An RNA of 177 nucleotides, treated with 2A3 and DMS and read out base by base. For DMS the reverse transcriptase was MarathonRT. 2A3 adducts were read by reverse transcription with SuperScript II with manganese. It was measured as part of the RMDB library OK2TST.
RNA sequence: GGGAACGACUCGAGUAGAGUCGAAAAGCCACGCCGCAAGCUCGGCGUCAUGGGCGGCACCUUCGAUCCCGUCCAUCACGGCCACCUGGUCGCGGCCAGCGAGGUCGCGAACCGGUUCGAGCUCGAAUAUACUAAUCAUCUUCGGAUGAUUAGUAUAAAAAGAAACAACAACAACAAC
Reactivity to 2A3 in 0.01 (KOAc 150mM, MgCl2 10mM, bicine 150mM(pH8.5), 24C), signal-to-noise 7, nucleotides 027 to 126: g060c010c010a060c070g110c060c040g080c120a060a020g000c020u020c020g010g010c010g010u000c010a010u020g000g010g000c000g010g000c080a080c040c000u190u260c100g060a110u050c000c000c000g000u000c010c000a010u010c020a000c030g120g010c040c020a030c010c030u070g010g000u010c010g010c000g020g000c000c000a080g120c070g190a180g000g000u000c010g010c000g010a040a050c000c000g000g000u060u080c030g010a000g000c020u030c060g070a100a030
Reactivity to DMS in 0.01 (KOAc 150mM, MgCl2 10mM, bicine 150mM(pH8.5), 24C), signal-to-noise 9, nucleotides 027 to 126: g010c020c020a100c140g020c090c070g020c120a120a060g020c050u000c000g010g000c010g010u000c170a010u000g010g010g000c010g010g010c180a080c070c100u000u010c210g000a090u000c170c000c000g010u000c010c010a010u000c140a040c040g010g010c080c090a080c110c010u000g020g010u000c000g010c020g020g000c000c000a180g020c170g000a140g020g010u000c000g010c010g010a040a030c010c050g000g010u000u010c050g000a030g000c030u000c080g010a120a160